[RMDB]
An RNA of 177 nucleotides, treated with 2A3 and DMS and read out base by base.
RNA sequence: GGGAACGACUCGAGUAGAGUCGAAAACUAUGCAGAUUCGUCUGCAUAGAGACCCGAUGAAGCGGCACUUACACAGCUUCAUACACGUAAGAUGUGCAAUAAAGGGACGAGGGUUCGCCCUCGUCAAUACUCUGGAGACUUUCGAGUCUCCAGAGUAAAAAGAAACAACAACAACAAC
Reactivity to 2A3 in 0.01 (KOAc 150mM, MgCl2 10mM, bicine 150mM(pH8.5), 24C), signal-to-noise 2, nucleotides 027 to 126: c010u000a020u000g000c000a000g010a010u020u080c110g080u030c050u000g060c010a000u000a000g000a030g030a030c010c000c000g010a040u030g010a040a000g000c040g020g060c170a010c110u100u180a030c170a000c030a070g030c000u000u000c010a010u050a040c110a010c030g050u040a060a030g040a180u050g030u030g020c040a050a110u230a300a060a040g180g040g010a000c010g010a000g030g000g000u030u030c140g130c020c010c020u010c010g010u000c000a000a010
Reactivity to DMS in 0.01 (KOAc 150mM, MgCl2 10mM, bicine 150mM(pH8.5), 24C), signal-to-noise 2, nucleotides 027 to 126: c000u000a000u000g010c000a010g000a030u000u000c250g000u000c000u000g000c000a010u000a000g000a090g010a140c020c020c000g020a080u000g010a020a010g010c000g030g030c100a130c160u000u000a090c120a100c090a100g000c020u000u020c010a030u010a140c120a100c120g000u000a140a040g010a040u000g010u000g040c100a120a070u020a030a090a120g000g010g000a010c060g020a020g010g010g010u000u010c240g010c000c000c010u000c000g020u010c000a030a030

For 2A3, 1,721 sequencing reads were counted.
For DMS the reverse transcriptase was MarathonRT.